The record gives the reactivity of an RNA of 177 nucleotides to 2A3 and DMS. High DMS reactivity at an A or C suggests that its Watson-Crick edge is free. The data come from the RNA Mapping Database (RMDB), library OK2TST. Reactivities are rounded to 0.1 and cut off at 0 and 3. For DMS, 1,544 sequencing reads were counted. For DMS the reverse transcriptase was MarathonRT. The RNA was probed in 150 mM KOAc, 10 mM MgCl2 and 150 mM bicine (pH 8.5) at 24 C. 2A3 adducts were read by reverse transcription with SuperScript II with manganese.

RNA sequence: GGGAACGACUCGAGUAGAGUCGAAAAAUGGCACAGCCCGUUUGCCGCACCGCCAUGACAUCGGAGUGAUCACCAAAAAUAGACAGGGCAUGGGUCGCAAUGGUACGCGCCGCCACAUGCAGAACAAGAUCUUGCAGAAUUUCGAUUCUGCAAGAUCAAAAGAAACAACAACAACAAC
Reactivity to 2A3 in 0.01 (KOAc 150mM, MgCl2 10mM, bicine 150mM(pH8.5), 24C), signal-to-noise 2, nucleotides 027 to 126: a000u080g010g000c020a050c050a050g020c000c040c000g010u090u100u070g030c000c020g030c020a030c000c000g000c030c020a030u140g020a090c000a090u040c040g000g020a100g040u110g070a080u080c000a070c040c010a110a050a010a010a050u100a060g080a030c060a050g120g070g000c010a010u100g020g040g020u070c020g000c040a040a110u070g050g060u050a070c060g000c000g030c090c020g060c020c000a090c030a060u020g020c020a000g030a180a000c030a020a080
Reactivity to DMS in 0.01 (KOAc 150mM, MgCl2 10mM, bicine 150mM(pH8.5), 24C), signal-to-noise 3, nucleotides 027 to 126: a130u000g000g010c010a140c240a150g010c010c000c030g030u000u020u010g030c030c000g030c060a080c070c030g030c060c020a060u000g010a080c080a020u010c040g030g000a140g000u000g010a070u010c030a090c070c060a010a050a020a080a070u000a070g010a110c070a110g020g010g010c060a040u000g000g020g010u010c110g040c080a040a090u010g010g030u010a050c080g000c080g010c100c110g000c030c020a100c070a030u000g010c010a130g010a040a080c180a080a180